[RMDB]
RNA sequence: GGGAACGACUCGAGUAGAGUCGAAAAGCUUAAGGCAUCAGGUACUUAUCUAGGACCGUACGGAAACCAUCCUAAGCAUGCGAAAGGAUGGACCAUGAACCGAGAGGCAAGUACUGAAGGAUGGGAAAGCAUGCACCGAUAGAAUCUAACGUACGGACACUUGCAAGCGAUUCGUCGCUUGCAAGUGAAAAGAAACAACAACAACAAC
Reactivity to 2A3 in 0.01 (KOAc 150mM, MgCl2 10mM, bicine 150mM(pH8.5), 24C), signal-to-noise 1, nucleotides 027 to 156: g010c040u080u110a080a050g120g020c000a020u010c090a070g050g010u010a010c000u060u090a060u070c020u060a050g090g040a030c000c060g040u010a040c010g000g000a020a010a010c010c000a010u000c010c000u040a100a060g030c020a020u110g050c030g040a200a000a000g000g030a000u080g000g000a010c030c080a170u110g030a120a110c010c000g010a060g000a000g080g000c020a040a070g080u020a020c000u010g100a120a040g110g000a020u080g000g050g000a150a000a000g010c010a000u020g050c030a040c020c010g010a000u020a100g050a000a030u030c020u070a070a090c020g040u060a000c050g020g000a000